[RMDB]
RNA sequence: GGGAACGACUCGAGUAGAGUCGAAAACAAACUCGUUUAGAGCGCCAGCAGCAGCAACUUGAUGAGCUCAGCCUGCGUCUUGAGCAAAAGAUGCAGCAACGUCUGGCAACUCAGCAGCAACGCUGGACACUAUUACGUCAUUCGUGACGUAAUAGUGAAAAGAAACAACAACAACAAC
Reactivity to 2A3 in 0.01 (KOAc 150mM, MgCl2 10mM, bicine 150mM(pH8.5), 24C), signal-to-noise 9, nucleotides 027 to 126: c030a010a080a010c020u040c060g070u110u230u300a070g010a020g030c060g020c010c010a000g000c010a010g000c010a010g000c010a040a090c050u110u130g050a080u080g040a110g010c010u020c110a010g010c010c030u070g020c030g020u030c010u040u110g050a090g080c060a100a140a000a000g010a010u010g000c000a000g010c020a080a050c060g070u060c020u010g000g000c000a000a060c020u030c010a020g000c010a000g020c010a040a060c090g000c020u020g010g010a010
Reactivity to DMS in 0.01 (KOAc 150mM, MgCl2 10mM, bicine 150mM(pH8.5), 24C), signal-to-noise 9, nucleotides 027 to 126: c090a110a110a160c050u000c040g010u010u010u020a090g000a040g030c300g020c010c020a030g010c020a110g000c060a110g010c030a060a090c080u000u000g010a110u010g010a300g010c030u000c040a030g020c140c050u000g000c050g010u000c010u000u010g010a180g020c170a080a070a020a020g000a030u000g010c000a020g000c140a050a060c130g010u010c020u000g000g010c020a070a120c110u000c010a030g010c030a090g010c090a070a090c140g000c020u000g000g010a300